Record summary: Chemical mapping of a 207-nucleotide RNA with DMS and 2A3.
RNA sequence: GGGAACGACUCGAGUAGAGUCGAAAACGGUGAAAUUUUAGUACCUGUGAAGAUGCAGGUUACCCGCGACAGGACGGAAAGACCCCAUGGAGCUUUACUGUAGUUUGAUAUUGAGUGUUUGUACCACAUGUACAGGAUAGGUAGGAGCCGAUGAGACCUAACAUCAUAACUUCGGUUAUGAUGUUAGAAAAGAAACAACAACAACAAC
Reactivity to DMS in 0.01 (KOAc 150mM, MgCl2 10mM, bicine 150mM(pH8.5), 24C), signal-to-noise 5, nucleotides 027 to 156: c030g020g020u010g010a060a100a170u010u000u010u010a140g020u000a060c010c010u010g010u000g020a100a120g010a120u000g010c010a020g010g010u000u000a040c020c010c030g030c030g010a070c030a100g010g010a060c020g000g010a080a070a140g010a090c030c030c030c050a100u000g000g010a100g020c030u000u000u000a100c050u000g010u000a050g020u000u010u000g020a080u000a070u000u000g020a100g010u000g020u000u000u010g030u000a030c030c030a060c090a050u000g020u000a040c000a050g010g010a110u000a030g000g010u000a100g010g010a060g020c000c030g010a100u000g010a150g010a110c170
Reactivity to 2A3 in 0.01 (KOAc 150mM, MgCl2 10mM, bicine 150mM(pH8.5), 24C), signal-to-noise 9, nucleotides 027 to 156: c030g010g010u070g060a060a140a190u120u160u080u120a110g020u050a040c000c010u010g010u030g090a170a100g050a120u160g000c010a000g010g000u010u040a020c010c000c010g010c000g020a020c020a040g030g010a010c010g020g030a080a060a020g060a040c000c010c010c030a040u080g020g030a050g050c030u050u080u140a070c040u070g040u090a060g050u070u080u130g090a070u060a070u110u110g040a050g040u050g030u070u120u100g020u050a020c030c020a050c050a150u140g000u030a010c010a040g020g020a030u050a050g010g030u010a020g010g030a000g020c000c020g020a030u060g010a010g020a020c010
The reactions ran in a buffer of 150 mM KOAc, 10 mM MgCl2 and 150 mM bicine (pH 8.5), at 24 C. For DMS, 18,723 sequencing reads were counted. As a SHAPE reagent, 2A3 marks flexible, mostly unpaired nucleotides at the ribose 2'-OH. The 2A3 profile rests on 8,800 reads.